[RMDB]
RNA sequence: GGGAACGACUCGAGUAGAGUCGAAAAUCGUUUUCAACUUUGAUCAGGUGUCGGUGGCGAACUUGGCGGACGGUAGAUAAAAUCCCUCGUUGCGCGCUCGAGAAGCAGCACCUUGAGCGAGAUGUACCGUCUAGGAUUUAUUCGUAAAUCCUAGACGAAAAGAAACAACAACAACAAC
Reactivity to DMS in 0.01 (KOAc 150mM, MgCl2 10mM, bicine 150mM(pH8.5), 24C), signal-to-noise 7, nucleotides 027 to 126: u010c050g010u000u000u000u000c030a110a120c150u000u000u000g000a080u000c090a080g010g010u000g010u000c060g010g020u000g010g000c030g000a030a060c080u000u000g010g010c040g010g000a040c040g010g000u000a050g000a130u010a050a060a090a270u010c020c010c010u000c080g020u010u000g000c070g010c020g000c010u000c020g010a030g000a090a100g020c060a060g010c050a070c140c010u000u000g000a020g010c020g010a080g000a100u000g000u000a090c200
Reactivity to 2A3 in 0.01 (KOAc 150mM, MgCl2 10mM, bicine 150mM(pH8.5), 24C), signal-to-noise 4, nucleotides 027 to 126: u040c020g000u030u000u020u040c060a080a060c070u140u090u190g080a090u140c050a070g000g030u040g070u130c050g060g060u040g060g010c010g000a060a050c050u050u100g040g000c000g020g020a020c010g020g040u060a050g030a080u130a070a100a000a100u030c000c010c000u020c040g070u070u070g050c060g000c010g010c030u000c020g040a030g010a090a020g040c070a020g010c000a030c000c000u010u040g010a000g000c030g000a040g010a060u110g040u090a080c020